[RMDB]
RNA sequence: GGGAACGACUCGAGUAGAGUCGAAAACAGACAAGUGCAGCUGAAGGAAAGGGCUCUUGCGACCCGAGUCCUGCAUGCAUGGAGGGACAUCAGGCAAUGGUCCAUGGCAAGAACGAACAGAUUGUCCGUGCAUGUCGGGUUUCGACCCGACAUGCACAAAAGAAACAACAACAACAAC
Reactivity to DMS in 0.01 (KOAc 150mM, MgCl2 10mM, bicine 150mM(pH8.5), 24C), signal-to-noise 1, nucleotides 027 to 126: c060a080g030a110c060a000a100g010u000g000c040a040g000c080u010g010a060a130g000g010a070a110a160g020g000g000c020u000c020u010u000g000c040g000a100c000c040c030g010a220g000u000c000c000u000g000c160a000u020g010c110a040u010g020g000a120g000g000g000a090c080a060u000c110a020g020g050c090a110a090u020g000g000u020c020c020a060u000g020g010c010a060a080g000a030a140c090g010a060a010c060a040g000a040u000u020g030u000c030c050
Reactivity to 2A3 in 0.01 (KOAc 150mM, MgCl2 10mM, bicine 150mM(pH8.5), 24C), signal-to-noise 1, nucleotides 027 to 126: c060a000g120a040c010a040a070g020u000g050c030a020g000c040u070g080a140a050g050g040a090a080a050g030g030g020c100u010c040u050u140g130c120g040a100c020c020c000g080a020g060u090c000c000u000g000c000a040u010g000c000a010u100g030g020a040g060g000g030a020c020a100u100c060a060g090g110c070a050a080u100g020g030u000c030c040a050u060g010g000c000a050a000g000a120a040c110g020a030a020c010a020g100a150u020u030g000u070c010c110